[RMDB]
RNA sequence: GGGAACGACUCGAGUAGAGUCGAAAAUUGAAAUUGAACCGUCCUGUUAUCGAAAGAUAGGCAGAAGAUACGAAAUGUGUGACAGCAUGGGAAGUAAAGGCAAACCGUGGUUCCCUUGAGUAUCUUAAUUAGGGGGACGAGUUCGCUCGUCCCCCAAGAUUAGCAUGUCGUUCGCGACAUGCUAAUCAAAAGAAACAACAACAACAAC
Reactivity to 2A3 in 0.01 (KOAc 150mM, MgCl2 10mM, bicine 150mM(pH8.5), 24C), signal-to-noise 2, nucleotides 027 to 156: u080u100g040a040a030a040u070u100g030a050a010c000c020g050u030c000c010u010g020u050u060a000u030c020g010a060a050a020g010a010u020a000g110g050c040a000g050a130a000g000a010u010a020c000g010a010a030a060u030g030u030g020u040g090a030c050a020g000c010a030u020g010g000g010a010a040g050u090a100a090a070g110g030c150a150a060a070c010c000g020u030g010g160u040u000c010c000c000u000u020g000a000g000u000a010u010c000u000u020a080a080u110u150a110g020g000g000g000g000a000c000g000a000g000u050u110c100g030c060u000c000g000u050c000c000c020c000c000a000a000
Reactivity to DMS in 0.01 (KOAc 150mM, MgCl2 10mM, bicine 150mM(pH8.5), 24C), signal-to-noise 2, nucleotides 027 to 156: u000u010g010a050a080a140u000u000g000a060a130c030c030g010u010c020c010u010g020u000u000a050u010c040g010a140a150a230g010a070u000a010g000g020c020a040g010a060a020g000a070u000a030c020g000a080a070a080u000g020u020g040u010g000a200c130a190g050c050a020u000g010g000g000a070a070g010u000a090a100a120g010g000c100a080a110a120c040c000g000u010g010g000u000u000c000c010c010u000u010g020a150g010u010a040u000c000u020u010a020a100u000u000a190g000g020g000g060g020a020c000g010a030g020u000u010c180g030c000u000c000g000u000c000c010c000c000c000a000a000
The record gives the reactivity of an RNA of 207 nucleotides to 2A3 and DMS. Source: RMDB library M2RFPK, as collected in RNAgym. The DMS profile rests on 3,551 reads. High 2A3 reactivity points to a flexible backbone, as in loops and unpaired stretches. The reactions ran in a buffer of 150 mM KOAc, 10 mM MgCl2 and 150 mM bicine (pH 8.5), at 24 C.